[RMDB]
RNA sequence: GGGAACGACUCGAGUAGAGUCGAAAAGGACAAAAAUAUUAAAUGCUAGUCCGGCCUUCUCACAGGCUGGGCGACACACUCAAACUGCGGGAAACCCCUAAAGCCUUCACUACCAAGCUUGUGUUUCGAAAGGACAUGGUGGCCAGGUUAAUUGCCUCUUAACUAUCUUGUUCGCAAGAUAGUUAAGAAAAGAAACAACAACAACAAC
Reactivity to 2A3 in 0.01 (KOAc 150mM, MgCl2 10mM, bicine 150mM(pH8.5), 24C), signal-to-noise 5, nucleotides 027 to 156: g030g010a060c070a060a130a050a060a040u190a170u300u230a120a100a030u100g020c020u030a010g010u010c000c010g000g000c000c010u080u090c200u050c030a090c060a020g010g000c010u000g000g000g000c010g030a000c000a000c000a000c020u060c060a040a140a100c040u070g020c040g030g020g010a060a080a090c000c040c000c000u040a090a070a000g020c010c000u040u030c040a020c070u090a050c020c030a060a010g060c050u090u060g030u020g050u060u050u060c040g060a100a040a050g020g010a020c030a070u080g010g030u020g040g000c040c040a000g050g000u050u050a090a060u150u140g030c000c020u010
Reactivity to DMS in 0.01 (KOAc 150mM, MgCl2 10mM, bicine 150mM(pH8.5), 24C), signal-to-noise 1, nucleotides 027 to 156: g010g010a300c050a000a120a050a070a100u000a120u000u010a040a100a070u000g000c000u010a290g020u000c000c010g020g050c010c030u010u000c140u000c120a130c250a070g000g030c000u000g000g010g000c000g010a140c230a040c100a060c040u010c080a040a040a110c050u010g000c110g010g050g000a050a090a090c110c000c040c030u000a090a050a160g030c000c010u030u000c010a060c020u000a080c000c000a070a130g020c040u020u000g050u010g020u020u000u000c010g000a060a140a130g000g000a060c050a040u000g000g030u000g030g000c000c030a030g000g000u020u000a060a100u000u010g000c000c010u000

The data come from the RNA Mapping Database (RMDB), library RSTRND.
This 207-nucleotide RNA was probed chemically with 2A3 and DMS.
Values are in units of 0.01, from 0 to 300, in steps of 10.
For 2A3, 3,321 sequencing reads were counted.
DMS adducts were read by reverse transcription with MarathonRT.